RNA sequence: GGGAACGACUCGAGUAGAGUCGAAAAGGGGUCGUCUAGUGUUUAGAGAACUACGACAUCGAUCAGCUGAAGCCUCCACGGCUGGGAGUCGCUCUAAGCCUAGACGACGGAGGCACCCAAACUACGAUUAUGAAAGUUCGCUUUCAUAAUCGUAGAACCUCUUCAGUAUCUUCGGAUACUGAAGAGGAAAAGAAACAACAACAACAAC
Reactivity to 2A3 in 0.01 (KOAc 150mM, MgCl2 10mM, bicine 150mM(pH8.5), 24C), signal-to-noise 3, nucleotides 027 to 156: g070g020g010g000u000c000g000u000c000u010a050g030u070g020u300u030u020a020g020a020g010a130a040c130u290a080c280g030a000c040a160u300c090g080a140u070c010a010g010c010u070g050a190a020g040c010c020u050c030c020a020c000g020g000c000u000g010g000g000a060g020u000c010g020c040u000c000u000a010a000g000c000c010u000a000g020a000c000g000a000c000g010g000a010g010g020c010a060c000c010c000a020a070a040c000u000a000c000g000a000u000u000a000u010g000a000a020a030g040u090u140c250g040c140u010u000u000c000a000u000a000a000u000c000g000u000a000g000a000a010
Chemical mapping of a 207-nucleotide RNA with 2A3. The 2A3 profile rests on 2,555 reads. Conditions: 150 mM KOAc, 10 mM MgCl2 and 150 mM bicine (pH 8.5), 24 C.